[RMDB]
RNA sequence: GGGAACGACUCGAGUAGAGUCGAAAAGCGCGUUCGCGCGCGAUGCGGAUAUGGAUGCGAAGGUUUGGUGGGAGAGGGAGGAUCGGAAACGAUCCUCCUCCCCACCUCCCACACCAACAAACCCGCAUCCUAAGUCAAACCUGCCCUUCGGGGCAAAAUAAAACAUGUAAUUCGUUACAUGUUUUAUAAAAGAAACAACAACAACAAC
Reactivity to DMS in 0.01 (KOAc 150mM, MgCl2 10mM, bicine 150mM(pH8.5), 24C), signal-to-noise 2, nucleotides 027 to 156: g010c000g030c000g050u010u010c300g040c030g070c000g010c000g000a080u000g020c030g020g030a130u000a190u010g000g000a020u000g010c050g000a140a140g010g040u010u000u000g010g020u000g000g070g000a100g010a300g000g000g010a020g050g010a010u000c000g000g010a120a070a150c050g000a030u000c000c000u000c000c010u010c100c000c020c040a250c010c000u000c010c000c010a050c070a120c080c060a100a300c050a000a060a010c040c000c010g000c010a020u000c000c010u000a040a110g020u000c030a080a090a110c070c080u000g000c000c000c010u010u010c260g040g040g010g020c000a000a010a040
Reactivity to 2A3 in 0.01 (KOAc 150mM, MgCl2 10mM, bicine 150mM(pH8.5), 24C), signal-to-noise 4, nucleotides 027 to 156: g020c010g000c000g030u040u150c190g000c000g010c010g020c030g110a090u230g080c120g120g010a010u000a010u030g010g010a000u000g010c040g050a180a100g010g000u020u010u050g060g000u000g010g000g000a010g000a000g000g000g000a000g000g000a000u000c000g000g000a010a000a010c000g010a000u000c010c000u000c010c000u000c000c010c010c000a010c000c000u000c010c000c000a000c000a010c040c150a060a210c020a000a020a000c000c020c010g000c000a000u000c000c000u000a000a000g000u000c010a030a050a130c020c060u050g010c000c010c000u020u060c240g020g000g000g010c020a020a000a010
An RNA of 207 nucleotides, treated with DMS and 2A3 and read out base by base. It was measured as part of the RMDB library RNAMAK. For 2A3 the reverse transcriptase was SuperScript II with manganese. Reactivities are given for positions 27 through 156.